[RMDB]
RNA sequence: GGGAACGACUCGAGUAGAGUCGAAAACAAGUAUUCGGUCUUGGGCUGAUGAUAUCAGACCCAAUCACUACGGCAGAUCUUGUUACGGUCGCCCGAACGGCUGAAAAGGCUGGGUUCACGACACUGAAGUAGGGACGAUAUUCGUAUCGUCCCUACUAAAAGAAACAACAACAACAAC
Reactivity to DMS in 0.01 (KOAc 150mM, MgCl2 10mM, bicine 150mM(pH8.5), 24C), signal-to-noise 3, nucleotides 027 to 126: c080a070a040g010u010a060u030u000c050g000g010u000c100u030u000g000g000g020c010u000g000a010u000g000a130u090a300u000c000a040g000a150c020c000c020a020a060u040c130a030c190u000a030c100g000g000c000a040g000a090u000c020u030u040g000u000u000a090c060g010g000u000c030g010c020c050c040g000a090a100c030g000g050c010u000g000a010a120a070a130g030g010c000u030g010g020g000u000u000c100a100c030g020a110c090a100c110u000g000a140
Reactivity to 2A3 in 0.01 (KOAc 150mM, MgCl2 10mM, bicine 150mM(pH8.5), 24C), signal-to-noise 3, nucleotides 027 to 126: c020a030a030g020u050a190u070u130c060g050g000u000c040u030u070g030g000g000c010u000g000a020u020g100a050u090a090u300c070a110g300a300c000c000c020a000a010u070c030a000c080u090a030c020g020g010c020a020g000a080u030c020u030u090g040u080u000a040c080g040g000u000c030g030c000c000c000g010a100a010c010g000g000c020u050g090a000a000a060a200g060g000c000u010g070g000g030u010u040c010a010c030g000a000c010a040c160u070g050a010